Description:
Chemical mapping of a 177-nucleotide RNA with 2A3 and DMS. The data come from the RNA Mapping Database (RMDB), library RFMREP. Values cover nucleotides 27 to 126. DMS adducts were read by reverse transcription with MarathonRT. The reactions ran in a buffer of 150 mM KOAc, 10 mM MgCl2 and 150 mM bicine (pH 8.5), at 24 C.

RNA sequence: GGGAACGACUCGAGUAGAGUCGAAAAUCAGCCUGAAAAUGUUCUCCGGUUUGACCGUAACCUGAGGUCAGAUAUCUGAGCCCACAGCACGGCGGCCCAUUAAGCUUAUCGUCUGCUCCUGUGUAGGGACUUGAUGAUUGUUCGCAAUCAUCAAGUCAAAAGAAACAACAACAACAAC
Reactivity to 2A3 in 0.01 (KOAc 150mM, MgCl2 10mM, bicine 150mM(pH8.5), 24C), signal-to-noise 1, nucleotides 027 to 126: u070c000a000g040c020c020u040g000a120a030a000a050u120g040u070u000c020u010c030c000g000g070u000u030u120g070a060c040c040g050u090a080a040c000c010u050g050a020g000g050u010c030a000g030a010u120a060u000c010u020g040a000g040c010c000c000a060c060a000g030c040a020c010g030g030c010g030g010c000c000c000a050u110u120a080a000g000c020u050u050a040u080c030g020u000c040u030g000c010u020c000c000u060g030u020g070u150a100g140g090
Reactivity to DMS in 0.01 (KOAc 150mM, MgCl2 10mM, bicine 150mM(pH8.5), 24C), signal-to-noise 2, nucleotides 027 to 126: u020c060a120g000c120c000u020g010a060a060a140a070u010g000u000u000c010u010c030c050g010g020u000u000u010g010a040c050c020g000u000a090a070c120c040u020g000a120g000g000u000c000a030g000a090u010a060u020c040u000g010a060g010c040c010c010a070c130a080g000c150a030c100g020g010c060g020g020c020c030c040a090u010u030a090a100g000c060u000u010a130u000c050g020u010c020u010g010c030u010c040c030u000g000u000g010u020a090g000g020